[RMDB]
RNA sequence: GGGAACGACUCGAGUAGAGUCGAAAAGAUAUGGAGUGGUACUACCCACCCGUGCGAGUCGGAAACGACUCCACGGAGGUACGUAACAUCUCCUAAGUCAAAACCAAGAGGGUUCGCCCUCUUGGAACAAGGGUAGUUAGUUCGCUAACUACCCUUGAAAAGAAACAACAACAACAAC
Reactivity to DMS in 0.01 (KOAc 150mM, MgCl2 10mM, bicine 150mM(pH8.5), 24C), signal-to-noise 5, nucleotides 027 to 126: g000a050u000a300u000g000g000a030g060u000g000g000u000a020c000u000a010c000c000c040a200c260c010c000g000u000g010c230g020a010g000u000c000g010g000a100a120a190c010g010a020c000u000c000c000a000c020g010g000a030g000g010u000a000c240g010u000a010a000c010a010u010c010u000c000c000u000a030a120g000u000c040a110a090a110a150c010c000a000a010g000a010g010g010g010u000u010c260g010c000c000c010u000c000u000u000g000g000a050a090
Reactivity to 2A3 in 0.01 (KOAc 150mM, MgCl2 10mM, bicine 150mM(pH8.5), 24C), signal-to-noise 3, nucleotides 027 to 126: g030a010u070a020u150g000g000a010g010u030g030g000u020a000c010u010a010c010c020c050a150c060c020c000g010u000g050c230g010a000g000u000c010g020g000a020a090a040c020g000a000c000u000c000c000a000c000g000g000a000g000g000u020a030c170g000u020a030a020c010a080u080c020u010c040c000u020a110a030g050u030c030a020a040a080a140c010c000a000a000g010a000g050g090g000u090u210c300g170c010c000c020u010c000u010u000g000g000a000a020
Source: RMDB library TTRDEL, as collected in RNAgym.
The record gives the reactivity of an RNA of 177 nucleotides to DMS and 2A3.
For DMS, 6,098 sequencing reads were counted.
Values are in units of 0.01, from 0 to 300, in steps of 10.
For 2A3 the reverse transcriptase was SuperScript II with manganese.
The RNA was probed in 150 mM KOAc, 10 mM MgCl2 and 150 mM bicine (pH 8.5) at 24 C.